[RMDB]
Conditions: 150 mM KOAc, 10 mM MgCl2 and 150 mM bicine (pH 8.5), 24 C. This 207-nucleotide RNA was probed chemically with DMS and 2A3. For 2A3 the reverse transcriptase was SuperScript II with manganese.
RNA sequence: GGGAACGACUCGAGUAGAGUCGAAAAAUUCUGCACCACAUUUCAAAAGGCCAAUGGUGUCCGAAAUGCAAAAACAAGACAGAAGCGAAACUUCUCUCCUUUCUCGAAGAACACUUUGAAGACCCAAUUCAUCAGUUCAGAGUUUCAUGGUGUAAGAACACCUCUCACUAUUCGUAGUGAGAGGUGUAAAAGAAACAACAACAACAAC
Reactivity to DMS in 0.01 (KOAc 150mM, MgCl2 10mM, bicine 150mM(pH8.5), 24C), signal-to-noise 1, nucleotides 027 to 156: a140u000u040c040u000g000c040a060c000c020a020c050a160u010u000u000c020a000a100a080a100g000g010c000c070a210a090u000g020g020u000g050u010c010c130g040a030a040a040u000g000c050a050a070a100a060a040c050a040a010g000a070c130a050g020a040a040g010c010g010a130a110a300c020u000u000c000u000c000u030c000c000u020u020u000c000u010c000g020a160a160g020a020a120c040a010c030u010u000u010g020a060a110g060a000c010c010c000a170a120u000u000c090a080u010c000a000g000u000u020c070a180g020a090g010u000u000u020c010a060u000g020g020u010g010u000a050a110g000a080
Reactivity to 2A3 in 0.01 (KOAc 150mM, MgCl2 10mM, bicine 150mM(pH8.5), 24C), signal-to-noise 3, nucleotides 027 to 156: a000u110u000c010u060g010c010a020c000c000a030c020a050u040u060u080c070a120a090a020a090g040g000c030c020a080a160u220g090g000u130g050u090c010c000g020a030a030a010u050g010c050a010a040a000a070a120c020a060a010g070a020c020a010g040a030a010g010c080g120a090a120a100c030u060u020c010u000c010u060c020c020u030u160u100c040u040c050g090a140a070g010a060a040c060a000c100u080u070u090g010a050a050g040a050c050c000c040a030a070u070u060c040a050u010c020a010g030u030u010c020a010g010a020g040u010u060u110c070a050u090g010g000u020g040u070a090a070g150a040